[RMDB]
RNA sequence: GGGAACGACUCGAGUAGAGUCGAAAAGAUAUGGAGUGUGUGGAGGCUAUGAUGGUGGCUAUAAUCUUUGAAUCGGAAACGAUUCAAAGGUAGCCACUAAGUAGCCGAUGAAACACACUCCUAAGUCGUAUAUCUUUCACUUCGGUGAAAGAUAUACAAAAGAAACAACAACAACAAC
Reactivity to DMS in 0.01 (KOAc 150mM, MgCl2 10mM, bicine 150mM(pH8.5), 24C), signal-to-noise 2, nucleotides 027 to 126: g000a070u010a300u000g010g010a040g030u000g000u000g000u000g000g000a010g040g000c010u000a010u010g000a250u040g000g010u000g000g000c020u000a070u020a300a110u000c010u000u000u030g000a010a020u000c000g000g010a160a120a190c010g020a000u000u000c000a010a020a000g000g000u000a000g010c030c010a010c000u000a040a300g000u000a010g040c000c000g000a040u010g010a120a130a020c010a010c000a010c030u000c000c000u000a000a070g000u000c100
Reactivity to 2A3 in 0.01 (KOAc 150mM, MgCl2 10mM, bicine 150mM(pH8.5), 24C), signal-to-noise 2, nucleotides 027 to 126: g100a020u140a080u260g000g000a020g000u030g000u010g000u010g020g040a020g000g000c010u010a010u060g110a130u300g030g010u010g000g000c000u030a030u070a300a300u080c000u000u010u010g010a000a000u000c000g020g020a050a070a080c040g000a000u020u000c000a000a010a000g000g000u020a010g000c030c000a000c020u000a020a020g000u000a000g030c000c000g020a010u010g030a000a000a000c010a000c000a000c000u000c000c010u010a020a010g000u020c000